Structure probing data (DMS and 2A3) for a 207-nucleotide construct. Conditions: 150 mM KOAc, 10 mM MgCl2 and 150 mM bicine (pH 8.5), 24 C. It was measured as part of the RMDB library M2RFOK. 2A3 adducts were read by reverse transcription with SuperScript II with manganese.
[RMDB]
RNA sequence: GGGAACGACUCGAGUAGAGUCGAAAAAUCCUCAGGUUCAUAAGCGUGAUGAUUGGGUGUUCAUGCUCCAUGCAUGACAUGUGCCUCCUUUGAACCUUGUUACGACCUUGGCACAUUACCCAUCUGUAAAAGACGUUCGCGUUCGCGCGAACGUCAACCCUGUAUGUACCUUCGGGUACAUACAGGGAAAAGAAACAACAACAACAAC
Reactivity to DMS in 0.01 (KOAc 150mM, MgCl2 10mM, bicine 150mM(pH8.5), 24C), signal-to-noise 1, nucleotides 027 to 156: a100u000c050c020u000c030a080g030g000u000u010c000a060u010a010a050g000c100g000u030g010a110u010g010a080u010u000g050g010g010u000g020u010u040c000a040u010g020c050u000c100c300a200u010g020c000a020u010g010a030c300a150u000g000u000g000c000c010u020c060c090u000u000u000g000a040a020c010c010u000u000g030u000u030a160c150g030a090c100c080u010u000g020g040c000a030c020a070u000u000a090c000c010c010a050u010c050u030g000u020a040a060a110a120g000a030c010g040u000u000c000g010c000g030u000u010c300g050c060g060c010g000a010a000c030g030u000c000a000a030
Reactivity to 2A3 in 0.01 (KOAc 150mM, MgCl2 10mM, bicine 150mM(pH8.5), 24C), signal-to-noise 2, nucleotides 027 to 156: a000u040c010c010u010c030a010g010g020u000u010c000a020u100a230a050g020c070g150u090g170a130u060g010a030u160u260g030g020g000u070g030u090u070c000a000u010g010c030u070c250c060a100u300g000c000a000u010g010a010c000a010u020g010u040g000c000c000u000c010c010u000u000u040g000a000a000c000c000u010u060g060u020u090a090c120g070a120c020c060u040u040g000g010c010a020c000a040u070u140a030c000c010c010a000u000c030u030g080u040a020a030a070a150g000a010c000g020u000u000c000g020c030g020u030u030c120g000c000g010c000g130a010a000c000g000u010c000a000a000